RNA sequence: GGGAACGACUCGAGUAGAGUCGAAAACAGAGGGGACGAGCGGUAUAGAAUACCGGUCUUGUGAACAUCAGAGGAUGUCAUGCGGCAGGGUUGCCAGUAACUCCCACGUACACGGGGCGAAGAGGAAAAGGAUGGUCUAUUUCGAUAGACCAUCCUUAAAAGAAACAACAACAACAAC
Reactivity to 2A3 in 0.01 (KOAc 150mM, MgCl2 10mM, bicine 150mM(pH8.5), 24C), signal-to-noise 3, nucleotides 027 to 126: c040a020g050a000g080g000g000g010a020c010g010a010g010c030g000g010u030a070u090a150g220a290a050u100a110c010c000g010g060u040c000u010u070g020u010g030a070a010c010a010u050c050a040g060a090g300g060a030u010g060u070c010a040u070g040c000g020g000c010a040g040g000g060u060u030g020c010c040a000g000u010a040a060c010u010c010c000c020a060c020g010u050a020c050a030c090g000g000g020g030c010g020a020a070g010a050g090g060a080a070
Reactivity to DMS in 0.01 (KOAc 150mM, MgCl2 10mM, bicine 150mM(pH8.5), 24C), signal-to-noise 4, nucleotides 027 to 126: c110a080g020a110g010g000g030g000a040c050g000a080g010c040g020g000u000a070u010a090g020a060a300u010a010c000c010g000g020u010c020u010u010g020u000g000a130a040c080a070u000c050a130g010a090g010g000a030u020g010u010c040a020u010g010c090g000g010c050a050g000g000g000u000u020g000c020c000a080g000u010a050a170c160u000c020c000c040a130c090g010u030a070c170a080c080g030g000g010g000c050g000a060a110g020a070g010g000a040a060
The record gives the reactivity of an RNA of 177 nucleotides to 2A3 and DMS. The RNA was probed in 150 mM KOAc, 10 mM MgCl2 and 150 mM bicine (pH 8.5) at 24 C. 2A3 adducts were read by reverse transcription with SuperScript II with manganese.